[RMDB]
RNA sequence: GGGAACGACUCGAGUAGAGUCGAAAAAGCUGCCGCUGCAAGGCACGAGCGUGCGCCGGAUGCAUGUCGCCUAUGUAUUCGAGGCCGAGUACGACAACCAGGCGGUGCGCGUCGCGCAAGUGCGCGAUCGCGCCUCGGAUUUCGAUCCGAGGCGCGAAAAAGAAACAACAACAACAAC
Reactivity to 2A3 in 0.01 (KOAc 150mM, MgCl2 10mM, bicine 150mM(pH8.5), 24C), signal-to-noise 3, nucleotides 027 to 126: a000g050c080u050g010c010c020g040c080u120g020c070a090a080g020g020c050a010c050g050a070g060c040g000u060g000c020g030c000c070g080g020a030u070g000c040a030u080g040u130c020g010c010c010u120a110u170g040u010a050u030u030c040g030a140g240g000c140c020g020a020g040u070a010c050g040a040c050a040a050c050c020a010g010g040c020g020g000u020g010c120g000c000g060u060c030g000c010g000c060a190a130g140u160g100c020g000c020g060a020
Reactivity to DMS in 0.01 (KOAc 150mM, MgCl2 10mM, bicine 150mM(pH8.5), 24C), signal-to-noise 4, nucleotides 027 to 126: a080g030c060u000g000c030c010g020c040u010g010c120a130a110g010g030c030a040c040g000a120g010c000g030u010g020c020g010c040c060g010g010a050u000g010c040a080u000g010u000c110g010c070c060u010a080u020g010u000a020u000u000c020g010a190g030g020c120c030g000a050g030u000a030c020g000a120c120a070a090c260c140a110g000g020c000g020g000u000g010c060g010c030g020u000c010g000c030g000c020a170a150g030u000g010c010g020c020g000a100
Structure probing data (2A3 and DMS) for a 177-nucleotide construct. The 2A3 profile rests on 4,212 reads. DMS (dimethyl sulfate) methylates the pairing face of unpaired adenines and cytosines. The RNA was probed in 150 mM KOAc, 10 mM MgCl2 and 150 mM bicine (pH 8.5) at 24 C. For DMS the reverse transcriptase was MarathonRT. 2A3 adducts were read by reverse transcription with SuperScript II with manganese. As a SHAPE reagent, 2A3 marks flexible, mostly unpaired nucleotides at the ribose 2'-OH. It was measured as part of the RMDB library OK2TRN.